Structure probing data (2A3 and DMS) for a 207-nucleotide construct. For 2A3 the reverse transcriptase was SuperScript II with manganese.
[RMDB]
RNA sequence: GGGAACGACUCGAGUAGAGUCGAAAAAAAAAAAAGUUCUUAUCAAGGGAAGCAGAGGGACUGGCCCGACGAAGCUUCAGCAACCGGUGUAAUGGCGAAAGCCAUGACCAAGGUCAUAAAUCCAGCAAGCUCGAACAGCUUGGAAGAUAAGAACAAAUAAUGAUAAUCGAUUCGUCGAUUAUCAUUAAAAAGAAACAACAACAACAAC
Reactivity to 2A3 in 0.01 (KOAc 150mM, MgCl2 10mM, bicine 150mM(pH8.5), 24C), signal-to-noise 2, nucleotides 027 to 156: a000a000a000a000a000a000a000a000g020u010u000c000u010u000a010u000c010a050a040g060g030g000a000a000g030c000a010g010a010g000g000g000a020c000u020g010g040c000c000c030g050a090c010g010a010a000g000c000u000u010c020a010g090c040a010a020c000c030g040g040u090g050u180a050a050u020g000g010c010g060a050a030a020g000c000c020a000u010g010a000c010c000a070a100g010g020u000c000a030u090a130a070a080u080c030c000a000g010c000a040a000g000c000u090c120g080a130a040c040a060g000c020u000u020g030g010a030a080g000a010u000a000a000g000a000a000c010a010a010a000
Reactivity to DMS in 0.01 (KOAc 150mM, MgCl2 10mM, bicine 150mM(pH8.5), 24C), signal-to-noise 1, nucleotides 027 to 156: a000a000a000a030a040a060a000a100g000u010u000c000u000u000a030u000c010a080a140g010g020g010a040a060g000c050a020g000a120g020g010g030a200c040u010g000g040c020c020c000g000a230c130g010a090a070g010c030u020u010c040a110g020c060a100a010c010c000g010g040u000g000u000a000a010u000g000g020c000g010a160a060a160g030c000c010a000u000g000a020c040c010a140a070g010g020u000c040a080u010a030a050a060u000c040c010a150g030c000a010a010g010c000u000c020g020a140a150c200a140g000c000u000u000g020g000a090a090g020a030u000a010a040g020a030a030c010a060a060a080
The RNA was probed in 150 mM KOAc, 10 mM MgCl2 and 150 mM bicine (pH 8.5) at 24 C.
Reactivities are rounded to 0.1 and cut off at 0 and 3.